[RMDB]
RNA sequence: GGGAACGACUCGAGUAGAGUCGAAAAGAUAUGGAAGUACAUGAGUGUGAGACUAUCAACGAGAAGUUAUCGGAAACGAUAAUACUUCGAUGAGUUGAUAGUCUCACACUCAUGCGCUUCCUAAGUCCAGUAAUUUCAGGUUCGCCUGAAAUUACUGAAAAGAAACAACAACAACAAC
Reactivity to DMS in 0.01 (KOAc 150mM, MgCl2 10mM, bicine 150mM(pH8.5), 24C), signal-to-noise 2, nucleotides 027 to 126: g010a090u010a300u010g010g000a000a010g010u000a080c000a010u000g000a010g030u000g010u000g010a020g000a040c010u000a010u010c000a000a000c010g000a220g000a010a010g000u000u000a010u010c010g000g010a150a110a260c000g000a020u000a020a080u010a080c020u000u000c010g000a130u010g000a260g000u000u000g000a000u000a000g010u000c000u000c000a000c000a000c000u000c000a000u000g010c020g000c010u010u000c000c000u000a020a110g010u000c040